An RNA of 177 nucleotides, treated with DMS and 2A3 and read out base by base. 2A3 adducts were read by reverse transcription with SuperScript II with manganese. The reactions ran in a buffer of 150 mM KOAc, 10 mM MgCl2 and 150 mM bicine (pH 8.5), at 24 C. 2A3 is a SHAPE reagent: it acylates the 2'-hydroxyl of flexible nucleotides of all four kinds.
RNA sequence: GGGAACGACUCGAGUAGAGUCGAAAAGCUCGGAGACGAGCAAGGCUGACAAAACACUGUCCCAACCUCCACGUGGUGUCGGCUGGAUAAUGCUGCAUUAUGUUGCAUUUAUCAACUGGGAACUAAAACCUACCUACGAUUUCGAUCGUAGGUAGGUAAAAGAAACAACAACAACAAC
Reactivity to DMS in 0.01 (KOAc 150mM, MgCl2 10mM, bicine 150mM(pH8.5), 24C), signal-to-noise 3, nucleotides 027 to 126: g010c020u000c000g000g000a270g000a220c010g010a000g020c000a120a090g010g000c000u010g040a030c060a010a110a110a090c010a030c130u000g000u000c010c020c000a160a110c040c070u000c050c060a100c140g000u000g020g020u000g000u000c000g000g000c020u040g000g010a050u000a020a000u000g000c000u000g000c000a170u050u040a080u000g010u000u000g010c010a000u010u020u010a020u000c010a080a110c170u070g010g020g020a050a080c050u000a100a080a110
Reactivity to 2A3 in 0.01 (KOAc 150mM, MgCl2 10mM, bicine 150mM(pH8.5), 24C), signal-to-noise 8, nucleotides 027 to 126: g000c000u000c000g010g030a090g030a050c010g000a000g000c010a010a020g030g000c010u020g010a030c030a010a180a090a020c060a040c070u090g060u060c000c010c000a040a100c020c040u060c040c040a100c090g040u080g000g000u020g020u030c000g010g000c020u050g030g000a010u010a040a000u030g010c010u020g000c020a080u090u150a120u300g020u030u040g000c000a020u050u070u110a040u020c020a020a050c050u070g000g000g030a050a000c020u100a070a050a030